[RMDB]
RNA sequence: GGGAACGACUCGAGUAGAGUCGAAAAGCCUGACCUUUUGGUUGGCGCUAACGCCCGUCGGGCUGUUUUGGCGCUGUUCAGGCUGAGUGUUGUGGUCCGGCCGUUCGCGGUCAGACAAUGAAGGGCCCAAGCAUCCUAUAUUCGUAUAGGAUGCUUGAAAAGAAACAACAACAACAAC
Reactivity to DMS in 0.01 (KOAc 150mM, MgCl2 10mM, bicine 150mM(pH8.5), 24C), signal-to-noise 8, nucleotides 027 to 126: g010c000c000u000g000a040c050c040u010u010u020u020g020g020u020u020g000g010c010g010c000u010a020a020c050g000c010c000c000g020u030c220g010g020g010c010u020g030u010u000u020u010g010g010c010g010c000u000g020u010u000c010a010g000g010c000u000g010a130g010u010g010u000u000g010u000g000g010u000c000c030g000g000c000c010g010u010u030c170g020c030g010g010u000c020a050g000a050c090a080a070u030g010a120a110g010g010g000c030c020
Reactivity to 2A3 in 0.01 (KOAc 150mM, MgCl2 10mM, bicine 150mM(pH8.5), 24C), signal-to-noise 5, nucleotides 027 to 126: g000c000c000u000g000a030c020c030u130u210u150u260g160g010u080u250g030g000c000g000c000u020a010a000c020g020c020c010c060g200u160c200g030g000g010c040u090g060u030u080u030u050g020g000c020g020c030u020g060u050u050c010a020g000g000c000u010g040a150g030u070g000u040u070g050u010g010g020u010c000c000g000g000c020c020g020u030u070c220g000c010g070g000u000c030a040g000a080c030a020a030u160g040a110a070g000g010g010c000c000